[RMDB]
RNA sequence: GGGAACGACUCGAGUAGAGUCGAAAAGGCGUUCCUCAACAAGGGGCUGACCAUCAACCUGACCGACGAGAGGGUGACCCAAGACGAGGUCGUCGACGAAGUGGUCAGCGACGUCGCCGAGGCGCCGCGUGAGAGCCGGAUUCGUCCGGCUCUCACGAAAAGAAACAACAACAACAAC
Reactivity to DMS in 0.01 (KOAc 150mM, MgCl2 10mM, bicine 150mM(pH8.5), 24C), signal-to-noise 2, nucleotides 027 to 126: g000g000c000g000u060u020c000c000u000c070a080a030c300a100a130g000g050g000g010c010u000g010a010c030c030a110u010c100a050a050c080c040u000g010a040c070c000g000a090c000g010a300g000a300g000g000g000u010g000a080c000c000c000a110a140g000a030c110g010a300g000g000u000c000g010u040c120g000a060c000g000a080a140g030u060g000g010u000c000a020g020c000g020a060c170g010u000c020g000c050c050g000a000g000g000c010g050c010c050g030
Reactivity to 2A3 in 0.01 (KOAc 150mM, MgCl2 10mM, bicine 150mM(pH8.5), 24C), signal-to-noise 2, nucleotides 027 to 126: g000g000c010g010u190u070c010c000u040c020a080a190c090a150a170g030g050g070g000c030u000g010a000c000c000a010u120c090a020a130c000c020u060g040a050c030c040g120a090c020g000a020g000a090g240g090g040u220g050a140c000c000c030a020a030g130a050c100g000a100g010g070u040c020g010u010c070g010a080c040g020a050a010g020u000g030g000u030c000a010g010c000g040a020c020g010u040c000g010c040c070g000a020g000g030c020g000c020c000g020
The record gives the reactivity of an RNA of 177 nucleotides to DMS and 2A3.
The RNA was probed in 150 mM KOAc, 10 mM MgCl2 and 150 mM bicine (pH 8.5) at 24 C.
Source: RMDB library OK1LIB, as collected in RNAgym.